[RMDB]
Background: The record gives the reactivity of an RNA of 177 nucleotides to DMS and 2A3. For DMS, 4,945 sequencing reads were counted. DMS adducts were read by reverse transcription with MarathonRT. Reactivities are given for positions 27 through 126.

RNA sequence: GGGAACGACUCGAGUAGAGUCGAAAAGAUAUGGACCACAACAGAGAUCGGGUCGGAAACGACCCAAGAUCGACGAAGUUGAUGGUCCUAAGUCAAAACACAUAGUCCUCUUCGGAGGACUAUGUGAGAACUCACUAAACUUCGGUUUAGUGAGUUCAAAAGAAACAACAACAACAAC
Reactivity to DMS in 0.01 (KOAc 150mM, MgCl2 10mM, bicine 150mM(pH8.5), 24C), signal-to-noise 3, nucleotides 027 to 126: g010a010u000a010u010g010g000a030c000c010a030c000a030a010c000a040g000a010g010a010u000c020g010g010g010u000c010g010g000a000a000a030c000g010a020c000c000c010a020a090g010a010u000c000g000a170c280g000a110a100g010u000u010g010a100u000g020g010u000c010c000u000a000a050g000u010c010a140a090a120a260c000a000c000a010u000a000g020u000c000c000u000c000u000u010c230g020g010a000g010g000a000c000u000a000u000g000u000g010a100
Reactivity to 2A3 in 0.01 (KOAc 150mM, MgCl2 10mM, bicine 150mM(pH8.5), 24C), signal-to-noise 2, nucleotides 027 to 126: g000a000u010a000u050g000g000a010c020c010a000c010a020a010c000a010g020a010g010a030u010c030g000g000g000u000c000g000g010a000a010a000c000g020a000c000c040c000a010a030g000a000u000c010g300a220c030g010a040a000g000u000u030g120a300u020g020g000u010c000c000u000a000a000g000u000c010a000a040a110a130c000a010c010a010u010a000g020u000c010c000u020c010u070u130c300g150g020a000g030g000a000c000u000a000u000g000u000g000a000